[RMDB]
RNA sequence: GGGAACGACUCGAGUAGAGUCGAAAAGAAUGUAUGUAAACCGUGUGGCACACAAUGGCUAUUCAGGAAUCGUUCUGAGGCAACAGGUAAAAUGGAAGAAAGCCAACUCCUUAGCACACGGAAGAAAAUUAUCCGGGAGUUUCGACUCCCGGAUAAUAAAAGAAACAACAACAACAAC
Reactivity to DMS in 0.01 (KOAc 150mM, MgCl2 10mM, bicine 150mM(pH8.5), 24C), signal-to-noise 2, nucleotides 027 to 126: g000a120a030u000g020u000a020u000g010u000a090a140a090c020c000g040u000g030u020g000g010c040a070c100a060c130a060a130u010g000g020c000u000a080u000u030c010a090g000g000a070a100u030c120g010u000u000c000u000g000a080g020g000c100a080a070c060a080g040g000u010a020a090a180a080u050g040g000a070a100g000a050a030a140g000c010c030a080a110c080u000c000c010u000u030a060g000c010a000c010a010c030g000g050a030a100g010a060a030a060
Reactivity to 2A3 in 0.01 (KOAc 150mM, MgCl2 10mM, bicine 150mM(pH8.5), 24C), signal-to-noise 2, nucleotides 027 to 126: g160a000a000u130g000u140a000u180g030u180a060a220a110c000c000g000u020g020u180g140g010c050a000c010a020c030a060a080u170g010g000c040u130a140u050u040c000a030g040g120a130a260u130c010g060u060u010c060u000g060a080g010g050c060a030a100c000a070g080g000u130a040a050a060a060u050g050g040a070a090g090a070a220a000g000c010c020a010a010c010u060c020c000u000u080a030g000c000a000c030a000c000g000g000a050a050g040a000a020a030
An RNA of 177 nucleotides, treated with DMS and 2A3 and read out base by base. For DMS the reverse transcriptase was MarathonRT. The 2A3 profile rests on 696 reads. For 2A3 the reverse transcriptase was SuperScript II with manganese. Values cover nucleotides 27 to 126.